[RMDB]
RNA sequence: GGGAACGACUCGAGUAGAGUCGAAAAUUGACAUGGAAAUGAGAAUCAUUAUUACGUCACUCAACUGGUCGCGAGAUCAGCCGGUAAGCUGAGAGACCCACGCAGUCGGACUCUUCAGAUUAUCUCCUACCACGUACUAGUUCGCUAGUACGUGGUAAAAAGAAACAACAACAACAAC
Reactivity to DMS in 0.01 (KOAc 150mM, MgCl2 10mM, bicine 150mM(pH8.5), 24C), signal-to-noise 4, nucleotides 027 to 126: u000u000g000a040c000a130u010g000g000a060a040a030u000g000a220g020a200a130u040c040a030u010u000a110u030u030a080c120g010u000c010a060c110u000c060a080a190c050u000g000g000u000c020g030c270g020a180g010a020u000c010a010g020c090c080g010g000u000a010a020g010c020u000g000a040g010a030g010a060c030c020c020a070c090g030c150a060g000u000c300g000g000a120c030u000c020u020u010c020a030g020a070u010u020a020u000c010u010c070c100
Reactivity to 2A3 in 0.01 (KOAc 150mM, MgCl2 10mM, bicine 150mM(pH8.5), 24C), signal-to-noise 8, nucleotides 027 to 126: u080u040g010a010c040a060u130g080g080a020a050a030u070g020a070g150a160a120u170c040a020u020u110a090u100u160a080c050g010u010c020a010c050u070c010a030a090c010u010g000g000u020c010g000c040g020a030g000a090u010c010a010g040c010c020g030g000u030a030a010g000c010u010g010a010g000a000g020a060c040c000c000a050c060g250c040a050g070u130c040g040g010a060c000u000c000u160u080c070a000g000a020u040u010a020u020c050u000c000c010